[RMDB]
RNA sequence: GGGAACGACUCGAGUAGAGUCGAAAAUGGCAUUUGCCAGCAACCCGUCAAGCGUCAUAACAUAUACCACUUGCGGUAUAGCAACCAUCAAAGAUCGCAUUUGACAGUUAUGGCAAAAGGACGGCAAUCUAAACACACAGUUCGCUGUGUGUUUAGAAAAAGAAACAACAACAACAAC
Reactivity to 2A3 in 0.01 (KOAc 150mM, MgCl2 10mM, bicine 150mM(pH8.5), 24C), signal-to-noise 3, nucleotides 027 to 126: u040g010g000c040a060u050u060u300g000c010c000a000g050c020a010a050c010c010c000g000u000c000a040a030g040c030g060u000c010a010u010a000a010c000a030u160a010u040a200c030c040a030c020u030u040g000c020g020g000u030a030u040a050g010c030a050a160c070c030a100u170c100a150a050a060g060a040u040c030g000c030a020u000u010u040g020a020c030a010g000u010u000a000u010g000g000c000a030a070a030a080g070g000a010c010g020g020c010a020a040
Reactivity to DMS in 0.01 (KOAc 150mM, MgCl2 10mM, bicine 150mM(pH8.5), 24C), signal-to-noise 3, nucleotides 027 to 126: u000g020g020c000a300u010u010u010g000c000c000a020g010c100a070a080c110c020c000g010u000c010a070a070g010c300g020u020c010a020u000a000a000c020a130u010a210u000a120c130c000a040c060u000u000g010c030g010g020u010a010u000a110g020c150a100a110c180c110a070u010c120a050a060a120g000a030u000c040g000c020a040u000u000u000g010a080c140a090g010u000u000a010u010g020g000c000a020a090a150a110g000g010a010c020g010g010c250a070a050